[RMDB]
RNA sequence: GGGAACGACUCGAGUAGAGUCGAAAACUCUAAGCUGGGAGAAUAAAUCUUAUCAGUCUUGAACAAUUUAAGUUCUGUUAUCCGAUCUUCAAAAAUUAUAUCGAUAUAACCCUAUCGUUGUUCAAACCAGGAUAUCUGUCUUCGGACAGAUAUCCUGAAAAGAAACAACAACAACAAC
Reactivity to 2A3 in 0.01 (KOAc 150mM, MgCl2 10mM, bicine 150mM(pH8.5), 24C), signal-to-noise 2, nucleotides 027 to 126: c050u030c070u060a200a000g000c000u040g000g060g000a010g010a010a070u300a170a270a170u090c010u000u030a130u300c000a000g150u010c020u000u000g100a020a000c000a000a030u000u280u300a030a010g020u060u080c010u090g050u140u000a100u060c010c000g010a020u000c030u130u080c090a110a120a110a150a170u120u230a260u020a000u040c000g000a000u000a000u000a030a080c020c000c020u000a070u130c010g000u000u020g000u060u000c000a030a040a030c040
The record gives the reactivity of an RNA of 177 nucleotides to 2A3. For 2A3 the reverse transcriptase was SuperScript II with manganese. The data come from the RNA Mapping Database (RMDB), library RFM100.